[RMDB]
RNA sequence: GGGAACGACUCGAGUAGAGUCGAAAAGAUAUGGAAUGUUCGAUAAGAAGACAUCGGAAACGAUGUUCUUCUUUUGACGAACUUCCUAAGUCAAACAAAAUUUGGACGUUCGCGUCCAAAUUUUGAACCUCUAAUGGUUCUUCGGAACCAUUAGAGGAAAAGAAACAACAACAACAAC
Reactivity to DMS in 0.01 (KOAc 150mM, MgCl2 10mM, bicine 150mM(pH8.5), 24C), signal-to-noise 1, nucleotides 027 to 126: g000a000u000a300u010g000g030a020a000u000g000u000u000c000g020a210u010a010a020g000a030a000g010a030c010a010u010c000g000g030a150a050a220c010g010a010u000g000u010u000c000u000u000c000u000u000u000u000g010a230c140g000a010a030c000u000u000c000c000u000a040a110g000u010c010a070a100a250c030a010a010a000a010u000u000u000g010g000a010c010g050u010u010c280g030c010g000u000c000c000a000a000a010u000u000u000u000g000a090a170
The record gives the reactivity of an RNA of 177 nucleotides to DMS. The reactions ran in a buffer of 150 mM KOAc, 10 mM MgCl2 and 150 mM bicine (pH 8.5), at 24 C.